Chemical mapping of a 177-nucleotide RNA with DMS and 2A3. Values are in units of 0.01, from 0 to 300, in steps of 10. For DMS the reverse transcriptase was MarathonRT. The data come from the RNA Mapping Database (RMDB), library OK1LIB.
[RMDB]
RNA sequence: GGGAACGACUCGAGUAGAGUCGAAAAGGAGAAGGACCAAGUGUAAUGCCAAAUACGGAGCCACUUGUGUGAGGACCCUCAGAGAUCAUUGUGAGAAGCCCACGUUCCGUGUGUCGGUGACGGUAUCAAAUUAGCAGGCUUUCGAGCCUGCUAAUUUAAAAGAAACAACAACAACAAC
Reactivity to DMS in 0.01 (KOAc 150mM, MgCl2 10mM, bicine 150mM(pH8.5), 24C), signal-to-noise 3, nucleotides 027 to 126: g010g040a070g000a160a120g010g000a070c040c010a000a030g020u000g000u000a080a100u040g000c030c010a120a050a120u080a080c170g000g030a100g000c100c050a010c040u000u010g010u030g000u000g000a060g000g000a150c040c000c030u000c010a090g020a150g010a080u030c060a050u020u030g000u020g010a040g000a140a150g010c020c010c030a160c040g000u020u000c050c000g000u010g030u030g010u050c040g030g000u000g000a040c080g000g020u040a010u010c210
Reactivity to 2A3 in 0.01 (KOAc 150mM, MgCl2 10mM, bicine 150mM(pH8.5), 24C), signal-to-noise 2, nucleotides 027 to 126: g050g060a100g000a000a160g070g110a020c000c030a080a060g050u080g060u220a050a070u120g040c010c010a120a050a140u130a150c110g000g000a030g020c050c000a110c070u030u080g050u060g000u010g090a120g060g050a120c010c000c000u040c030a000g000a000g000a110u110c000a050u050u120g050u040g020a050g090a020a070g040c000c000c000a020c020g050u030u000c000c010g020u110g050u110g050u060c060g000g030u090g030a040c050g020g000u000a080u160c150

As a SHAPE reagent, 2A3 marks flexible, mostly unpaired nucleotides at the ribose 2'-OH. In probing experiments dimethyl sulfate is read out at A N1 and C N3, which are open when not base-paired. Conditions: 150 mM KOAc, 10 mM MgCl2 and 150 mM bicine (pH 8.5), 24 C. For 2A3 the reverse transcriptase was SuperScript II with manganese.